[RMDB]
RNA sequence: GGGAACGACUCGAGUAGAGUCGAAAAAAACGUGUGUUACUUUAGGUAUGGUUGAUCAAGAUCAAGCAAAGCAAUUGAAAGAUGCAGGUUUGACUGCAUACAACCAUAACAUCGACACUUCCAGAGAGUAUCCCGUGGUAUUCGUACCACGGGAUACAAAAGAAACAACAACAACAAC
Reactivity to 2A3 in 0.01 (KOAc 150mM, MgCl2 10mM, bicine 150mM(pH8.5), 24C), signal-to-noise 2, nucleotides 027 to 126: a020a010a020c110g100u090g000u000g010u060u040a070c040u110u060u140a090g010g040u000a020u020g010g000u010u000g020a030u000c030a010a060g010a120u040c000a030a010g040c010a090a130a130g050c030a120a200u040u150g070a130a130a050g120a020u040g000c020a040g070g100u000u010u060g060a020c010u000g000c000a030u080a110c000a000a000c000c040a000u020a020a010c010a030u040c020g040a010c010a000c000u010u000c030c010a060g040a030g000a000
Reactivity to DMS in 0.01 (KOAc 150mM, MgCl2 10mM, bicine 150mM(pH8.5), 24C), signal-to-noise 2, nucleotides 027 to 126: a080a050a030c210g020u000g030u000g000u000u000a140c160u010u000u000a120g030g020u000a010u000g000g000u000u000g000a080u000c150a070a050g000a140u000c030a000a010g020c020a070a130a120g000c010a060a050u000u000g030a160a030a180g010a060u000g000c020a110g040g010u000u000u000g010a060c000u000g000c110a010u020a100c010a000a020c010c000a000u000a020a030c030a090u000c120g000a040c020a010c010u000u000c030c020a050g000a140g020a240
Overview: The data come from the RNA Mapping Database (RMDB), library OK2TST. Chemical mapping of a 177-nucleotide RNA with 2A3 and DMS. For DMS, 1,359 sequencing reads were counted. The RNA was probed in 150 mM KOAc, 10 mM MgCl2 and 150 mM bicine (pH 8.5) at 24 C. For 2A3, 1,812 sequencing reads were counted. Values are in units of 0.01, from 0 to 300, in steps of 10.